[RMDB]
RNA sequence: GGGAACGACUCGAGUAGAGUCGAAAAUGAUCGAGGAUUACGACUUUGUCGCAAGCUGGAUUAACAACAAUCUGGUCUAUGACCUGUCUGUUGUGGAAGAAAAGCAACUCAUUGCUGGUGACGGGCGCGGCUCGAAUAUCAAGGGGCUGCUGAAUCGACUGAGUGAAGGAUUCGUCCUUCACUCAGUAAAAGAAACAACAACAACAAC
Reactivity to 2A3 in 0.01 (KOAc 150mM, MgCl2 10mM, bicine 150mM(pH8.5), 24C), signal-to-noise 2, nucleotides 027 to 156: u160g010a080u080c020g030a020g050g000a060u110u100a060c040g040a070c060u120u070u260g040u040c050g000c050a050a010g020c020u050g000g050a050u070u070a140a050c080a020a000c020a020a030u080c040u050g030g020u000c040u220a110u300g020a010c000c010u050g030u100c040u020g000u020u020g010u060g030g070a050a000g000a040a080a000a000g030c040a010a060c020u010c080a180u060u200g000c050u030g030g030u020g000a010c000g000g030g010c060g000c050g070g030c010u010c040g080a120a120u110a040u130c030a110a050g030g010g000g000c010u020g000c020u040g040a010a040u050c040g000
Reactivity to DMS in 0.01 (KOAc 150mM, MgCl2 10mM, bicine 150mM(pH8.5), 24C), signal-to-noise 1, nucleotides 027 to 156: u000g040a060u000c000g010a170g030g100a190u010u000a040c010g010a010c010u000u000u000g020u040c010g020c050a020a100g000c040u000g030g050a070u000u000a100a050c070a030a000c070a040a090u010c090u010g010g050u000c040u000a110u000g010a020c010c010u000g010u000c050u010g000u000u010g020u000g020g000a080a170g000a100a100a120a100g040c020a040a050c060u000c070a120u000u010g020c050u000g030g020u000g000a160c070g020g020g050c100g010c070g020g010c010u000c060g020a100a110u020a050u000c110a070a130g000g030g000g040c000u000g020c020u010g000a050a220u010c020g000
Source information
Chemical mapping of a 207-nucleotide RNA with 2A3 and DMS. For 2A3 the reverse transcriptase was SuperScript II with manganese. In probing experiments dimethyl sulfate is read out at A N1 and C N3, which are open when not base-paired. It was measured as part of the RMDB library OK3TST. The reactions ran in a buffer of 150 mM KOAc, 10 mM MgCl2 and 150 mM bicine (pH 8.5), at 24 C.